[RMDB]
RNA sequence: GGGAACGACUCGAGUAGAGUCGAAAAUUUAACCAUGCUUCCAUCGAUGGGUGCAUGGUUUAUGGCAGAGUGUGAUGCCAUGAACUCAUCAUGGUCAUGCAUGUGUGCAUGGUUAGAUGACCAUCAGCACGUUUGCCGUCUUCGGACGGCAAACGUGAAAAGAAACAACAACAACAAC
Reactivity to 2A3 in 0.01 (KOAc 150mM, MgCl2 10mM, bicine 150mM(pH8.5), 24C), signal-to-noise 1, nucleotides 027 to 126: u000u000u000a000a010c000c000a000u000g050c060u080u010c000c000a000u040c130g110a100u030g000g000g000u020g000c000a000u070g060g000u030u000u000a000u000g000g080c080a000g190a100g230u120g180u020g050a040u090g000c010c000a000u000g000a000a000c040u000c090a020u000c000a000u050g020g070u110c010a010u200g030c000a020u120g000u100g000u000g090c020a000u050g000g060u000u000a000g000a000u050g100a080c050c000a090u230c020a000g050
An RNA of 177 nucleotides, treated with 2A3 and read out base by base. It was measured as part of the RMDB library RFM100.